This 177-nucleotide RNA was probed chemically with DMS and 2A3.
The reactions ran in a buffer of 150 mM KOAc, 10 mM MgCl2 and 150 mM bicine (pH 8.5), at 24 C.
RNA sequence: GGGAACGACUCGAGUAGAGUCGAAAAAGCCAGUACGCUGGCAUCAGCUCAUUGCACACAACAAUGUCCACAUUCUUGCGAUUUCAUACGUCACUGGAAUGUUCCAUAAGUGUGCGAAAUCAGCGAACGCUUCAAGGUCUUUCGAGACCUUGAAGCGAAAAGAAACAACAACAACAAC
Reactivity to DMS in 0.01 (KOAc 150mM, MgCl2 10mM, bicine 150mM(pH8.5), 24C), signal-to-noise 2, nucleotides 027 to 126: a070g000c000c000a020g070u060a040c140g120c000u000g000g000c000a040u050c080a140g000c000u000c080a200u030u020g000c000a000c000a000c000a050a200c300a060a020u000g000u020c020c170a040c190a000u050u000c000u000u000g000c110g000a010u000u000u000c300a050u090a110c300g000u000c020a000c070u010g000g000a040a080u000g010u020u000c200c090a060u000a050a210g000u000g030u020g110c080g000a000a000a200u000c300a000g000c020g000a090a200
Reactivity to 2A3 in 0.01 (KOAc 150mM, MgCl2 10mM, bicine 150mM(pH8.5), 24C), signal-to-noise 4, nucleotides 027 to 126: a000g020c010c000a010g020u040a040c210g040c200u000g000g000c010a090u140c050a030g040c000u030c020a020u010u050g000c000a000c010a000c010a000a160c010a200a030u070g050u100c080c040a020c000a020u000u000c010u000u010g010c020g030a040u000u100u140c150a110u200a160c120g030u000c040a000c070u010g000g000a000a000u030g000u030u020c030c010a030u010a100a100g000u000g000u010g000c010g010a030a020a000u080c040a000g000c000g070a070a020
Reactivities are rounded to 0.1 and cut off at 0 and 3. 2A3 adducts were read by reverse transcription with SuperScript II with manganese. Values cover nucleotides 27 to 126.